[RMDB]
RNA sequence: GGGAACGACUCGAGUAGAGUCGAAAAGUUUACGCUCCAAGAUCGGUGGAUAGCAGCCCUAUCAAUAUCUAGGAGAACUGUGCUAUGUUUAGAAGAUUAGGUAGUCUCUAAACAGAACAAUUUGCCUCAUACGUUAGGACGUUCGCGUCCUAACGAACGAGCAGAGUAAGUUCGCUUACUCUGCUCGAAAAGAAACAACAACAACAAC
Reactivity to 2A3 in 0.01 (KOAc 150mM, MgCl2 10mM, bicine 150mM(pH8.5), 24C), signal-to-noise 6, nucleotides 027 to 156: g010u050u060u110a060c060g010c010u000c000c000a030a010g010a050u070c110g120g180u130g100g010a030u040a040g060c060a030g020c030c010c020u020a010u020c020a050a070u020a040u170c020u050a080g020g010a020g050a060a070c080u080g020u040g100c050u060a040u070g000u010u000u000a080g010a300a020g000a030u090u020a030g050g100u080a050g010u010c000u000c000u020a000a010a000c000a020g030a050a020c090a050a080u060u040u170g030c010c010u110c040a080u080a190c010g000u000u010a000g010g000a000c000g010u030u050c180g050c000g090u000c000c000u000a000a000c000g000a000a000
Reactivity to DMS in 0.01 (KOAc 150mM, MgCl2 10mM, bicine 150mM(pH8.5), 24C), signal-to-noise 1, nucleotides 027 to 156: g020u000u000u000a050c080g000c020u000c030c010a080a120g010a000u010c080g010g050u020g010g010a110u000a070g030c030a230g020c080c060c000u020a120u000c030a070a140u000a100u010c050u020a140g020g010a030g000a010a040c050u000g030u000g000c010u000a170u010g020u000u000u000a000g000a050a080g000a050u000u010a150g030g000u000a110g010u000c000u000c000u000a000a010a000c000a020g000a070a100c060a000a100u020u000u000g000c000c000u000c000a060u000a160c000g020u000u000a020g030g010a010c010g060u000u000c300g030c070g000u000c000c000u000a000a060c000g000a010a060
Structure probing data (2A3 and DMS) for a 207-nucleotide construct. For DMS, 2,658 sequencing reads were counted. For 2A3, 4,359 sequencing reads were counted. It was measured as part of the RMDB library M2RFPK. High DMS reactivity at an A or C suggests that its Watson-Crick edge is free. Conditions: 150 mM KOAc, 10 mM MgCl2 and 150 mM bicine (pH 8.5), 24 C.